[RMDB]
RNA sequence: GGGAACGACUCGAGUAGAGUCGAAAAAUUCUAUUCACUGUGCCAUCUGUCAAUUUGUUAGAUGAUCAGAGGGGAAAAGAAGAGCUAGAGCAAUGGUUACGGAAUGGUAGCAAUACCAUAUCGUGAUUUUGCAACUGACUUUCGAGUCAGUUGCAAAAAAAGAAACAACAACAACAAC
Reactivity to DMS in 0.01 (KOAc 150mM, MgCl2 10mM, bicine 150mM(pH8.5), 24C), signal-to-noise 1, nucleotides 027 to 126: a090u000u000c000u000a130u000u000c120a130c060u000g020u030g000c230c000a120u000c140u000g000u000c010a170a180u000u030u030g010u000u000a040g020a010u040g000a010u010c190a030g000a100g000g010g030g000a030a060a120a020g010a040a030g000a270g000c100u020a060g010a090g000c040a100a060u060g000g010u000u000a000c000g000g000a090a000u000g010g010u000a010g000c290a000a150u000a000c030c000a000u000a020u000c000g000u010g000a020u000
Reactivity to 2A3 in 0.01 (KOAc 150mM, MgCl2 10mM, bicine 150mM(pH8.5), 24C), signal-to-noise 1, nucleotides 027 to 126: a010u140u030c050u080a140u090u090c010a030c020u000g000u010g050c000c000a050u020c000u040g010u150c050a110a300u000u010u010g040u140u210a050g040a040u030g050a000u030c000a020g030a030g050g010g030g000a000a060a000a000g020a020a020g000a000g070c010u080a000g000a000g030c010a090a070u140g090g030u030u000a010c000g000g060a020a000u050g000g000u000a000g000c030a020a000u020a000c000c000a000u000a050u090c000g050u000g050a050u070
The record gives the reactivity of an RNA of 177 nucleotides to DMS and 2A3.